[RMDB]
RNA sequence: GGGAACGACUCGAGUAGAGUCGAAAAGAUAGUACCUUGAAUGGUAUGUAUCAUUGCUCACUUCCAAUGCCGGGAAAAUUUGGGUACGAGGUAAAAGAGUUGUACCUCGAUGGUGACUUUGUGGAGCACAGGGUGAACGUUUCGACGUUCACCCUGUAAAAGAAACAACAACAACAAC
Reactivity to DMS in 0.01 (KOAc 150mM, MgCl2 10mM, bicine 150mM(pH8.5), 24C), signal-to-noise 2, nucleotides 027 to 126: g000a040u010a040g010u000a010c000c000u000u000g010a180a060u010g020g000u000a010u000g000u000a000u000c010a110u010u000g030c000u000c020a100c070u010u010c030c010a030a130u000g030c020c030g000g020g010a080a070a110a140u010u030u000g010g010g030u010a080c050g000a010g020g010u010a020a100a170a160g000a170g000u010u000g010u000a000c010c010u000c040g030a060u000g000g000u000g020a050c130u010u010u000g020u010g000g010a030g020c140
Reactivity to 2A3 in 0.01 (KOAc 150mM, MgCl2 10mM, bicine 150mM(pH8.5), 24C), signal-to-noise 1, nucleotides 027 to 126: g010a000u060a000g040u020a010c020c000u170u150g270a170a250u160g040g000u010a000u080g250u000a020u010c010a060u040u170g030c060u000c010a050c000u120u020c000c010a020a110u050g000c040c000g000g070g190a080a000a060a090u130u110u080g010g010g000u040a030c040g010a060g000g010u000a040a050a060a050g180a000g080u050u110g020u050a010c010c000u000c000g020a010u010g050g030u050g000a080c030u020u070u110g060u080g090g080a040g020c040